[RMDB]
The record gives the reactivity of an RNA of 177 nucleotides to 2A3 and DMS. 2A3 adducts were read by reverse transcription with SuperScript II with manganese. DMS adducts were read by reverse transcription with MarathonRT. In probing experiments dimethyl sulfate is read out at A N1 and C N3, which are open when not base-paired. Values cover nucleotides 27 to 126.
RNA sequence: GGGAACGACUCGAGUAGAGUCGAAAAGAUAUGGACCCAGGGAGCUGCGGGAUCGGAAACGAUCCCGCCAGCAUCGAUCUGGUGUCCUAAGUCAAAACGGCAGUAUGUCUUCGGACAUACUGCCGAACGUCCAUAUAUUGUUCGCAAUAUAUGGACGAAAAGAAACAACAACAACAAC
Reactivity to 2A3 in 0.01 (KOAc 150mM, MgCl2 10mM, bicine 150mM(pH8.5), 24C), signal-to-noise 3, nucleotides 027 to 126: g010a000u080a020u110g010g010a010c000c000c010a000g020g010g000a040g070c020u000g000c010g010g050g000a010u030c010g010g030a070a040a040c010g020a000u000c040c010c000g020c010c010a000g000c000a110u300c010g010a040u030c000u000g030g050u190g020u130c010c000u000a070a010g050u010c020a010a020a090a100c010g010g010c010a000g010u000a010u010g000u020c000u090u200c300g050g000a000c000a000u010a010c000u000g000c000c000g000a000a000
Reactivity to DMS in 0.01 (KOAc 150mM, MgCl2 10mM, bicine 150mM(pH8.5), 24C), signal-to-noise 3, nucleotides 027 to 126: g010a030u000a300u010g000g000a010c010c010c000a010g000g010g000a010g020c000u000g010c010g010g010g010a000u000c000g010g000a090a070a170c010g010a010u000c000c000c010g000c090c030a000g020c110a170u000c140g010a070u000c010u000g010g020u000g010u000c000c000u000a010a070g000u000c040a060a050a100a170c030g010g010c010a020g010u000a010u000g010u000c000u000u010c200g010g010a010c010a000u000a000c010u000g000c000c000g000a010a030